RNA sequence: GGGAACGACUCGAGUAGAGUCGAAAAGAACACGUCUCGGGACGACGCUAAACUCGCCCUGGUCGGGAUGGGUUUAACGACCCCUCGGGUUUCCUAGUUCCUAAAACUAGGUGGUGGAGUCAGAUAAAAAACUUCUACACGUUCGCGUGUAGAAGAAGUUAUAAUAUGUGUUCGCACAUAUUAUAACAAAAGAAACAACAACAACAAC
Reactivity to DMS in 0.01 (KOAc 150mM, MgCl2 10mM, bicine 150mM(pH8.5), 24C), signal-to-noise 3, nucleotides 027 to 156: g020a100a080c010a110c040g020u000c010u010c010g050g030g020a090c040g030a060c000g000c080u010a110a090a080c140u000c010g000c020c000c000u000g020g010u000c100g030g000g000a040u010g000g020g010u000u000u010a070a130c010g010a140c000c010c010c010u000c070g030g020g010u000u000u010c030c010u000a050g010u000u000c030c040u000a060a040a050a030c000u000a030g010g010u010g020g010u010g000g000a230g020u000c040a080g000a180u050a000a050a070a100a080a090c000u000u010c000u000a000c010a000c010g000u000u010c300g000c010g070u000g000u000a000g010a020a010g000a010a040
Reactivity to 2A3 in 0.01 (KOAc 150mM, MgCl2 10mM, bicine 150mM(pH8.5), 24C), signal-to-noise 3, nucleotides 027 to 156: g050a080a020c080a010c060g010u000c000u010c010g030g010g020a100c300g000a020c020g060c220u020a000a020a000c000u000c010g040c020c000c010u060g040g070u060c040g000g000g060a090u090g040g010g000u010u040u060a090a010c020g010a010c010c000c000c000u020c020g030g010g000u020u020u020c000c010u010a010g000u020u030c020c040u110a030a020a010a010c010u000a020g010g000u010g020g020u040g010g050a060g020u100c060a050g090a110u300a060a090a010a000a020a030c000u000u000c000u000a000c010a010c000g020u040u030c170g020c000g070u010g000u000a000g010a000a000g000a000a000
The record gives the reactivity of an RNA of 207 nucleotides to DMS and 2A3. 2A3 adducts were read by reverse transcription with SuperScript II with manganese. As a SHAPE reagent, 2A3 marks flexible, mostly unpaired nucleotides at the ribose 2'-OH. It was measured as part of the RMDB library M2RFPK.